[RMDB]
RNA sequence: GGGAACGACUCGAGUAGAGUCGAAAAGAUAUGGAUAGCGAGGAUCUACAGUCUGAUGACCUCGGAAACGAGCAAGGAUGGGUAGGGAGCUAUCCUAAGUCAAAAGUAAAACGUUCGCGUUUUACAAGAUAAGACAAACGUUCGCGUUUGUCUUAUCAAAAGAAACAACAACAACAAC
Reactivity to DMS in 0.01 (KOAc 150mM, MgCl2 10mM, bicine 150mM(pH8.5), 24C), signal-to-noise 6, nucleotides 027 to 126: g010a040u000a300u010g000g010a010u000a020g010c000g010a050g010g000a040u010c000u000a020c010a300g010u000c000u000g020a150u010g010a060c300c010u000c000g000g000a060a080a140c020g000a000g000c050a070a170g010g010a010u000g010g000g000u000a010g000g000g000a040g000c000u000a000u000c000c000u000a010a050g000u010c030a060a060a130a100g000u000a000a000a010a000c000g010u000u010c200g010c010g000u000u000u000u000a010c000a090a100
Reactivity to 2A3 in 0.01 (KOAc 150mM, MgCl2 10mM, bicine 150mM(pH8.5), 24C), signal-to-noise 5, nucleotides 027 to 126: g040a010u080a040u140g000g000a000u000a000g010c030g060a270g060g020a020u010c000u010a010c010a010g030u000c010u040g120a260u190g050a200c020c010u010c030g010g020a060a070a010c010g000a000g020c030a090a150g060g000a020u050g300g290g000u000a010g000g000g000a010g000c000u000a000u000c000c000u010a090a010g020u000c050a150a010a000a110g000u010a020a010a000a010c030g030u070u090c300g030c010g110u000u010u000u000a010c010a010a030